[RMDB]
RNA sequence: GGGAACGACUCGAGUAGAGUCGAAAAUCGCUGAGCAGCUUGCGGGGCGCUUCAUCCUGACCAUGAGCAGCGGUAAGCUCGAAGGUACCAUGUUGCAGGCGAAGGUCGUAACUUUUAAGUAAGUUAACAAACCAAGGCAGUUCGCUGCCUUGGUUUGAAAAGAAACAACAACAACAAC
Reactivity to DMS in 0.01 (KOAc 150mM, MgCl2 10mM, bicine 150mM(pH8.5), 24C), signal-to-noise 2, nucleotides 027 to 126: u040c010g020c000u000g000a180g000c080a060g050c010u000u000g000c020g030g010g010g000c000g040c000u000u030c090a050u010c110c010u000g000a050c120c040a060u010g040a140g000c060a040g020c120g020g010u000a010a120g010c000u010c020g010a260a080g030g000u000a130c260c000a060u000g040u000u000g000c150a280g000g000c000g000a050a060g020g040u020c050g010u020a000a020c020u000u000u000u070a060a150g000u000a000a060g030u010u000a100a120
Reactivity to 2A3 in 0.01 (KOAc 150mM, MgCl2 10mM, bicine 150mM(pH8.5), 24C), signal-to-noise 1, nucleotides 027 to 126: u070c000g000c000u030g000a040g150c010a000g000c000u190u300g020c120g000g090g000g000c020g020c030u180u120c000a090u000c000c030u050g060a040c010c000a100u260g020a040g170c040a000g060c100g040g150u100a040a040g020c000u030c040g000a050a030g080g040u070a060c020c010a050u120g090u040u040g000c050a040g000g010c060g040a040a010g000g000u040c000g000u000a000a000c000u020u000u000u040a080a060g150u070a000a000g000u030u010a200a000